[RMDB]
RNA sequence: GGGAACGACUCGAGUAGAGUCGAAAAACAGCGAAAGGCACAAGACUUCGAACAUUAUAGCAGUUAGUAGUUGCCUAAACCCAUUGCAAUAUAUGGGACAGUAGAGGUCGCAAACCUAUACUGUGCGAAAAGUCGCAAGGUUUCGACCUUGCGACAACUAAAAAAUCCCUUUCGAGGGAUUUUUUAGAAAAGAAACAACAACAACAAC
Reactivity to 2A3 in 0.01 (KOAc 150mM, MgCl2 10mM, bicine 150mM(pH8.5), 24C), signal-to-noise 2, nucleotides 027 to 156: a000c040a000g040c010g050a140a040a040g000g040c020a010c010a090a060g050a030c000u060u060c050g120a200a050c050a200u250u270a140u290a130g080c080a020g010u040u120a030g030u050a010g020u110u060g010c000c000u030a060a010a020c000c000c000a010u000u010g000c000a010a010u010a000u000a000u150g000g010g010a000c010a000g000u010a010g000a000g000g020u040c020g060c190a090a090a000c000c000u000a000u000a050c000u000g000u020g000c000g020a150a000a000a000g010u010c000g000c010a010a010g020g010u010u100u210c190g070a070c010c010u000u000g000c000g000a000c000a000a000
Reactivity to DMS in 0.01 (KOAc 150mM, MgCl2 10mM, bicine 150mM(pH8.5), 24C), signal-to-noise 1, nucleotides 027 to 156: a000c110a060g030c030g020a090a120a070g020g050c000a160c200a100a110g000a100c000u000u000c030g000a130a130c060a100u000u010a140u010a060g010c020a120g050u000u000a100g010u000a180g050u000u000g000c020c030u000a050a050a050c000c000c000a060u000u000g000c080a110a190u020a110u000a030u000g000g010g020a100c030a010g000u000a000g010a020g060g020u000c010g050c300a060a120a130c010c000u000a020u000a010c000u000g010u000g000c030g010a040a060a050a110g000u000c000g010c000a000a000g000g000u000u000u010c250g000a050c020c000u010u000g000c010g000a010c000a000a020